Description: This 207-nucleotide RNA was probed chemically with 2A3 and DMS. The data come from the RNA Mapping Database (RMDB), library OK3TST.
RNA sequence: GGGAACGACUCGAGUAGAGUCGAAAAUGGGAAGAGAGAUGAAUGGCUGAAGAAAAUAUUACAGAAAGAGGACCUUCAGAACUCAAGAGCUGUACUUCACCCUCCUGUUGGCCAGAAGGUCAAGAGUGUAGGUUUUUGGCCAAUAAAUAACAAUUGAUCUCAUCAUUGAUUUCGAUCAAUGAUGAGAAAAAGAAACAACAACAACAAC
Reactivity to 2A3 in 0.01 (KOAc 150mM, MgCl2 10mM, bicine 150mM(pH8.5), 24C), signal-to-noise 2, nucleotides 027 to 156: u130g010g040g010a030a020g080a030g010a000g020a030u120g110a160a050u050g010g000c010u030g020a020a000g040a030a100a030a020u170a030u080u110a030c040a000g120a040a100a020g040a020g010g010a010c010c000u100u030c050a050g030a060a000c020u030c140a070a000g010a020g100c080u070g000u050a070c040u060u060c050a060c040c030c010u020c010c030u060g030u070u000g000g000c000c000a040g040a150a030g080g010u000c010a010a010g020a010g060u120g000u120a050g030g030u020u000u000u070u070g040g000c000c000a010a000u130a090a040a010u140a050a020c040a000a030u050u100g020a010
Reactivity to DMS in 0.01 (KOAc 150mM, MgCl2 10mM, bicine 150mM(pH8.5), 24C), signal-to-noise 2, nucleotides 027 to 156: u000g000g020g010a080a050g020a070g000a070g030a150u000g010a120a100u000g020g030c050u000g020a050a080g000a120a090a070a100u010a100u000u000a210c040a090g000a060a070a140g000a090g000g000a090c060c030u070u000c050a090g010a080a090c050u000c030a060a150g000a060g010c070u030g010u010a060c040u000u000c030a090c020c010c000u010c030c030u000g020u000u000g000g000c010c020a080g020a060a100g010g030u000c010a010a040g000a090g010u000g010u000a090g000g020u000u000u000u000u000g000g050c000c010a000a080u000a050a030a070u010a060a070c040a060a160u000u000g000a220
Description: Values cover nucleotides 27 to 156. For 2A3 the reverse transcriptase was SuperScript II with manganese. The RNA was probed in 150 mM KOAc, 10 mM MgCl2 and 150 mM bicine (pH 8.5) at 24 C.